The data come from the RNA Mapping Database (RMDB), libraries RFM100 and RFMREP.
This 177-nucleotide RNA was probed chemically with 2A3 and DMS.
For DMS, 2,298 sequencing reads were counted.
2A3 adducts were read by reverse transcription with SuperScript II with manganese.
For DMS the reverse transcriptase was MarathonRT.
RNA sequence: GGGAACGACUCGAGUAGAGUCGAAAAUUAUACCGUAAAUCUCUUUAAAUUCUGGAACUAAUUACGUAGAGGAUAUGUCUCAAUUUGUUCUGCAUUGAUGCCGCAGCGGGGACGGGGGCCAGGCCAUCGGUGUAUGGAAAUUCGUUUCCAUACACCGAAAAGAAACAACAACAACAAC
Reactivity to 2A3 in 0.01 (KOAc 150mM, MgCl2 10mM, bicine 150mM(pH8.5), 24C), signal-to-noise 5, nucleotides 027 to 126: u060u040a060u070a120c020c000g010u020a030a070a130u040c020u010c050u070u210u130a110a160a080u230u050c050u070g060g000a040a040c040u060a110a090u090u060a020c110g060u110a060g020a050g110g050a050u050a040u220g040u000c000u000c040a030a090u050u020u030g050u050u000c040u050g040c030a050u020u150g030a020u100g020c030c020g000c030a030g020c030g000g020g000g000a020c000g020g010g000g020g010c010c030a010g020g010c020c020a020u000
Reactivity to DMS in 0.01 (KOAc 150mM, MgCl2 10mM, bicine 150mM(pH8.5), 24C), signal-to-noise 2, nucleotides 027 to 126: u040u020a050u030a130c030c020g030u010a050a180a180u040c020u010c030u000u020u020a050a110a100u000u020c010u020g010g030a040a070c040u000a000a060u010u050a090c070g050u000a060g010a090g010g000a130u020a050u000g010u000c050u010c090a120a010u020u000u010g040u000u000c060u030g000c120a010u010u000g000a070u000g000c080c070g000c000a060g000c150g020g000g000g000a070c030g010g000g010g000g040c070c040a050g000g000c040c070a120u000